The record gives the reactivity of an RNA of 207 nucleotides to 2A3. The RNA was probed in 150 mM KOAc, 10 mM MgCl2 and 150 mM bicine (pH 8.5) at 24 C.

RNA sequence: GGGAACGACUCGAGUAGAGUCGAAAAUCCGCUUCUUCGGAAGCGGAAAAAAGAUAUGGAUGUACUCAGUACCUAUUCCAGCUAUGAAGUCGGAAACGAUGGAGCUGGAUAGGGAAGUGUACAUCCUAAGUCAAAAAGGAUUGGUUCGCCAAUCCAACCACUAUCGACAGUUCGCUGUCGAUAGUGGAAAAGAAACAACAACAACAAC
Reactivity to 2A3 in 0.01 (KOAc 150mM, MgCl2 10mM, bicine 150mM(pH8.5), 24C), signal-to-noise 2, nucleotides 027 to 156: u000c000c000g000c030u000u000c000u030u100c280g150g000a010a010g020c000g000g040a040a000a000a000a040a000g060a040u080a060u090g000g000a000u010g000u000a000c000u010c020a020g030u000a020c050c000u040a040u290u270c020c010a020g000c000u060a170u300g080a030a070g030u020c000g020g030a060a070a140c010g000a000u020g010g030a000g010c000u040g000g010a000u000a000g000g000g010a000a000g300u020g000u000a020c000a000u040c000c000u000a020a000g010u000c030a000a050a050a080a140g000g000a010u010u000g030g000u040u080c260g050c080c010a000a020u010c010c000a000a000